[RMDB]
RNA sequence: GGGAACGACUCGAGUAGAGUCGAAAAGGAUGGCAUUCGUCGGAUGGGAAAGCAUGCGCAUGCGAAAGGAUGGCUUCUCAGCCUUGCCAUCCGAAACGUACGUAUUAGGACGAAUGCUAUCGGUGUUCGGAUGGGAAAGCAUGCACAUGGAUCAGACUCGACGUAUGUGGUUCGCCACAUACGUCGAAAAAGAAACAACAACAACAAC
Reactivity to 2A3 in 0.01 (KOAc 150mM, MgCl2 10mM, bicine 150mM(pH8.5), 24C), signal-to-noise 1, nucleotides 027 to 156: g220g010a140u040g000g000c000a000u000u000c020g000u000c010g180g100a110u140g080g000g070a060a110a000g000c000a000u000g000c000g000c000a000u030g000c000g000a100a000a010g110g180a060u070g000g000c000u230u070c070u080c050a000g000c000c000u130u190g000c000c000a000u030c030c000g000a000a010a000c080g080u220a000c050g030u060a150u130u290a110g260g000a000c000g000a000a000u000g010c000u040a000u010c000g000g000u200g000u000u000c000g010g000a000u000g010g000g050a000a000a190g000c000a000u000g000c030a000c000a110u000g060g040a100u190c000a010g020a150c000